[RMDB]
RNA sequence: GGGAACGACUCGAGUAGAGUCGAAAAGAUAUGGACGAUGCAUAAGGACAUCGAUCUCGGAAACGAGGGAGUCCUAUGUCAUCGUCCUAAGUCAAAACACGAUAACGGGUUCGCCCGUUAUCGUGAACUCACACUAUAAGUUCGCUUAUAGUGUGAGAAAAGAAACAACAACAACAAC
Reactivity to DMS in 0.01 (KOAc 150mM, MgCl2 10mM, bicine 150mM(pH8.5), 24C), signal-to-noise 8, nucleotides 027 to 126: g010a040u000a300u000g000g010a010c010g010a010u000g010c000a010u000a050a070g010g000a020c000a260u000c150g000a040u000c000u010c000g000g000a130a100a190c010g010a010g000g000g010a030g010u000c000c000u000a010u000g000u010c010a010u000c000g010u000c000c000u000a000a070g010u000c040a100a080a100a200c000a010c000g000a010u000a010a000c000g000g000g010u000u010c260g010c000c000c000g010u000u000a000u000c000g010u000g000a030a080
Reactivity to 2A3 in 0.01 (KOAc 150mM, MgCl2 10mM, bicine 150mM(pH8.5), 24C), signal-to-noise 6, nucleotides 027 to 126: g030a030u070a040u130g000g010a000c000g010a010u010g010c010a000u070a240a300g010g010a010c030a200u280c150g090a150u030c000u000c010g020g020a090a070a050c020g000a000g010g030g000a020g010u000c010c010u010a000u010g070u180c000a000u000c000g000u000c000c000u000a000a000g000u000c010a000a000a060a110c010a000c000g000a000u000a000a000c000g000g000g060u060u100c260g180c020c000c000g000u000u000a000u000c000g000u000g000a000a000
Annotation
Chemical mapping of a 177-nucleotide RNA with DMS and 2A3. The data come from the RNA Mapping Database (RMDB), library TTRDEL.